[RMDB]
RNA sequence: GGGAACGACUCGAGUAGAGUCGAAAAUUGCUGAGGAACUUGGCGUGUCAAGAAAUACAGUUGAAGACGCGAUUGAGGAUACUGGUCAGGUGGCCGAGGAGGGCCACCUGUCCAUCCCCUCUCAGCGCGAGCAAAAACGUGACGCAGUAAAGUCAUACACUCCACCAGUAUUCGUACUGGUGGAGUGAAAAGAAACAACAACAACAAC
Reactivity to 2A3 in 0.01 (KOAc 150mM, MgCl2 10mM, bicine 150mM(pH8.5), 24C), signal-to-noise 2, nucleotides 027 to 156: u130u090g000c000u010g000a020g100g030a090a110c060u050u040g080g010c040g000u030g030u040c050a090a070g080a050a110a020u240a110c090a110g050u060u050g080a080a020g060a030c020g010c000g090a080u040u030g010a020g020g000a010u040a260c070u020g010g000u000c000a010g020g000u010g000g000c020c010g060a070g110g130a140g020g110g000c000c000a000c010c000u010g010u000c000c000a000u000c000c000c000c000u030c010u000c040a040g000c040g010c010g010a030g060c100a070a080a040a080a010c050g020u000g020a010c010g020c080a030g010u150a100a180a000g010u020c000a020u000a070
Reactivity to DMS in 0.01 (KOAc 150mM, MgCl2 10mM, bicine 150mM(pH8.5), 24C), signal-to-noise 1, nucleotides 027 to 156: u000u000g000c020u000g000a140g080g040a040a040c030u000u000g020g140c070g000u000g020u020c030a070a190g000a120a110a060u000a120c070a090g000u010u000g050a110a260g000a070c020g000c000g000a180u020u000g020a050g000g080a150u000a040c190u000g020g020u030c010a020g010g010u000g010g050c000c000g010a120g000g060a260g030g000g130c000c020a010c000c000u010g020u000c000c000a020u000c040c000c010c010u000c030u000c010a010g050c000g050c090g010a200g040c040a020a140a070a110a180c040g010u010g010a050c040g020c030a130g010u000a040a000a070g000u010c000a070u000a100
Annotation
Conditions: 150 mM KOAc, 10 mM MgCl2 and 150 mM bicine (pH 8.5), 24 C. An RNA of 207 nucleotides, treated with 2A3 and DMS and read out base by base. For DMS, 1,647 sequencing reads were counted. Values cover nucleotides 27 to 156. For 2A3, 1,190 sequencing reads were counted. It was measured as part of the RMDB library OK3TST.